[RMDB]
RNA sequence: GGGAACGACUCGAGUAGAGUCGAAAACUUAAUAACUGUCAUACUGCCGUCUCUCCAGUCCUCCGCUCAUGAGGGUUGGGUCCGAGGCGUCGACCAAAAUGAGCUAGCAAUCGGGUGGUGUUCUGGUCGCCCCGGCGCGAAAAUAUACAGAAUAGCGGAUUAACGAUAUGUUCGCAUAUCGUUAAUCAAAAGAAACAACAACAACAAC
Reactivity to 2A3 in 0.01 (KOAc 150mM, MgCl2 10mM, bicine 150mM(pH8.5), 24C), signal-to-noise 4, nucleotides 027 to 156: c060u130u110a140a030u150a260a150c070u120g060u120c050a050u090a150c060u110g080c040c000g020u010c010u010c000u000c010c010a000g010u020c000c000u000c010c040g060c060u050c040a050u130g010a000g020g000g010u010u000g010g000g010u010c060c060g010a020g000g000c010g000u020c020g000a060c020c020a020a020a050a140u050g020a020g020c010u020a020g010c030a050a090u060c020g030g000g000u020g010g000u020g040u080u030c010u040g000g030u030c020g010c000c000c010c020g030g000c020g000c000g050a010a010a040a010u180a010u050a030c020a010g050a070a060u090a080g110c100g060
Reactivity to DMS in 0.01 (KOAc 150mM, MgCl2 10mM, bicine 150mM(pH8.5), 24C), signal-to-noise 1, nucleotides 027 to 156: c060u010u000a130a090u010a100a070c050u010g050u010c020a170u000a070c040u010g030c060c010g000u000c010u010c010u000c010c020a070g000u010c000c020u010c010c080g000c130u010c120a040u010g010a100g020g030g090u000u000g000g010g020u010c060c030g010a120g000g010c010g000u020c050g000a210c040c050a070a060a080a080u000g010a120g000c000u000a120g040c020a100a120u000c060g030g000g040u000g010g020u000g000u010u000c080u010g060g000u010c030g030c020c000c030c080g030g020c050g020c000g000a040a040a050a110u010a130u010a300c090a070g000a020a140u020a190g010c030g030
Chemical mapping of a 207-nucleotide RNA with 2A3 and DMS.
For 2A3, 3,436 sequencing reads were counted.
Values cover nucleotides 27 to 156.
The data come from the RNA Mapping Database (RMDB), library RSTRND.